[RMDB]
RNA sequence: GGGAACGACUCGAGUAGAGUCGAAAACUCUGACGCUUCGGCGUCAGAGAAACCUCUAAGCAGAUUGGCGAGGACGACGCUGCGGAGCGCGUAUGCCAACAAAAACGCAUAGAUUCGUCUAUGCGAACUAGUAGCUAGGAUUCGUCCUAGCUACUAGAAAAGAAACAACAACAACAAC
Reactivity to 2A3 in 0.01 (KOAc 150mM, MgCl2 10mM, bicine 150mM(pH8.5), 24C), signal-to-noise 7, nucleotides 027 to 126: c000u000c000u010g010a000c000g020c010u030u060c220g170g000c000g010u000c000a000g010a000g010a000a000a000c010c000u020c090u140a100a100g050c070a070g080a300u040u040g020g000c030g040a110g210g080a030c020g040a080c010g020c030u140g070c080g190g160a040g010c020g000c000g000u010a040u140g000c020c010a010a010c030a020a090a010a010a010c010g000c000a010u000a010g020a020u030u040c130g040u000c090u000a000u000g000c000g010a020a010
Reactivity to DMS in 0.01 (KOAc 150mM, MgCl2 10mM, bicine 150mM(pH8.5), 24C), signal-to-noise 6, nucleotides 027 to 126: c010u000c000u010g020a010c000g030c000u000u000c220g040g030c000g010u000c000a000g000a020g010a020a070a120c050c010u010c200u010a120a130g020c180a110g000a160u000u000g000g010c010g010a120g010g000a070c020g000a090c020g020c010u000g010c260g000g000a030g020c010g020c020g010u000a050u000g010c010c010a010a020c100a040a060a050a100a160c010g000c000a010u000a000g000a020u000u010c130g010u000c000u000a000u010g010c000g010a030a080

Structure probing data (2A3 and DMS) for a 177-nucleotide construct. The RNA was probed in 150 mM KOAc, 10 mM MgCl2 and 150 mM bicine (pH 8.5) at 24 C. For DMS the reverse transcriptase was MarathonRT. For 2A3, 11,840 sequencing reads were counted. Values cover nucleotides 27 to 126. In probing experiments dimethyl sulfate is read out at A N1 and C N3, which are open when not base-paired.